[RMDB]
RNA sequence: GGGAACGACUCGAGUAGAGUCGAAAAAGAAACCUUCUACACAACGCUCUAAACGGCUUGGUUUCGCUGAGGCUUUUAAAAUACGGCUCGACAUCAUCGGUGAAAGCGUUAAUGCUGCAAUACCUGAGAAUCAGAAAUAGUUCGCUAUUUCUGAUUCAAAAGAAACAACAACAACAAC
Reactivity to 2A3 in 0.01 (KOAc 150mM, MgCl2 10mM, bicine 150mM(pH8.5), 24C), signal-to-noise 7, nucleotides 027 to 126: a000g090a060a020a000c020c000u090u040c060u180a040c040a010c010a110a050c060g010c010u010c000u110a100a120a020c040g000g000c000u030u050g050g000u020u030u070c040g000c060u050g060a050g040g060c030u080u100u130u260a080a190a060a050u180a070c060g020g000c010u020c030g040a040c000a060u060c000a010u040c030g040g000u040g060a100a030a000g000c000g020u060u080a080a040u180g010c010u010g010c020a040a110u030a170c000c000u020g010a040
Reactivity to DMS in 0.01 (KOAc 150mM, MgCl2 10mM, bicine 150mM(pH8.5), 24C), signal-to-noise 8, nucleotides 027 to 126: a080g010a080a080a080c030c020u000u010c050u010a100c120a070c110a070a060c110g000c020u000c050u010a070a090a100c160g000g010c050u010u000g010g010u000u000u000c050g010c140u000g010a090g000g010c070u000u000u010u010a030a080a060a070u010a070c070g010g000c000u000c030g010a070c060a060u000c040a050u000c040g020g010u000g000a090a120a070g010c020g010u000u000a070a100u000g000c020u000g000c080a050a080u000a090c040c010u010g010a220
This 177-nucleotide RNA was probed chemically with 2A3 and DMS. 2A3 adducts were read by reverse transcription with SuperScript II with manganese. The RNA was probed in 150 mM KOAc, 10 mM MgCl2 and 150 mM bicine (pH 8.5) at 24 C.